Chemical mapping of a 177-nucleotide RNA with 2A3 and DMS. The DMS profile rests on 923 reads.
RNA sequence: GGGAACGACUCGAGUAGAGUCGAAAAGCGUCUGUAGAGAAAGUCCAACCAACAAGAUCAACAAGCCUCUACAUCGGGGAGGGCAGUGGGAGUGUCAUGACAUUAUUAGAGUAUCUGGACCCUGCUAGCUUUACUCAAGGUUCGCCUUGAGUAAAGCAAAAGAAACAACAACAACAAC
Reactivity to 2A3 in 0.01 (KOAc 150mM, MgCl2 10mM, bicine 150mM(pH8.5), 24C), signal-to-noise 1, nucleotides 027 to 126: g000c020g070u100c100u000g030u030a040g030a000g020a140a110a000g030u030c050c010a010a010c040c040a020a070c040a030a040g040a160u170c010a050a090c020a080a030g020c000c000u000c020u000a030c020a060u030c050g050g000g000g030a050g000g050g000c000a020g000u130g010g050g000a080g000u060g040u040c080a090u140g000a030c000a020u100u190a080u080u130a200g010a020g060u070a050u050c030u040g050g020a010c020c010c000u010g080c050u060a040
Reactivity to DMS in 0.01 (KOAc 150mM, MgCl2 10mM, bicine 150mM(pH8.5), 24C), signal-to-noise 2, nucleotides 027 to 126: g040c130g020u000c100u000g000u000a020g010a050g010a140a110a110g000u000c070c060a090a110c120c070a090a110c100a070a080g000a100u000c110a060a060c120a100a130g010c090c010u000c000u000a070c110a060u010c080g000g020g010g000a120g020g000g000c110a060g020u000g000g000g000a070g040u000g000u010c060a070u010g010a070c090a020u050u000a090u000u000a110g000a100g000u000a030u000c010u000g000g000a130c010c000c010u000g000c050u000a100
Values cover nucleotides 27 to 126. It was measured as part of the RMDB library OK2TST.